This 177-nucleotide RNA was probed chemically with DMS and 2A3.

RNA sequence: GGGAACGACUCGAGUAGAGUCGAAAAGAUAUGGAUCUUCCAGCGAGCGAAGAACUCGGAAACGAGGGAGCUCCCUGGAGAGAUCCUAAGUCAAAGUUAUGUAAAGAGUUCGCUCUUUACAUAACAACUGAUUACUACCGUUCGCGGUAGUAAUCAGAAAAGAAACAACAACAACAAC
Reactivity to DMS in 0.01 (KOAc 150mM, MgCl2 10mM, bicine 150mM(pH8.5), 24C), signal-to-noise 3, nucleotides 027 to 126: g000a030u010a300u000g000g000a000u000c000u010u000c000c000a000g040c300g000a010g010c000g000a110a140g000a160a190c000u000c000g010g000a070a090a160c010g000a010g010g000g000a090g020c020u010c000c080c010u000g010g000a030g010a010g030a020u010c000c000u000a020a120g000u020c040a090a110a160g010u010u000a000u000g000u000a000a000a010g010a010g010u000u010c280g010c010u010c000u000u000u000a000c010a000u000a010a000c010a050a170
Reactivity to 2A3 in 0.01 (KOAc 150mM, MgCl2 10mM, bicine 150mM(pH8.5), 24C), signal-to-noise 2, nucleotides 027 to 126: g040a010u120a070u270g000g010a000u030c000u040u000c020c000a000g020c000g000a000g000c010g120a300a080g000a110a070c000u000c000g000g090a070a060a040c010g000a020g000g020g010a000g010c010u000c000c020c020u030g010g030a130g050a000g000a030u000c000c000u000a110a020g030u030c040a210a060a000g000u000u000a000u000g000u010a010a000a000g020a010g020u060u170c250g100c130u000c000u000u000u010a000c000a000u010a000a000c010a000a000
The reactions ran in a buffer of 150 mM KOAc, 10 mM MgCl2 and 150 mM bicine (pH 8.5), at 24 C. For DMS, 2,313 sequencing reads were counted. The data come from the RNA Mapping Database (RMDB), library TTRDEL. Reactivities are given for positions 27 through 126.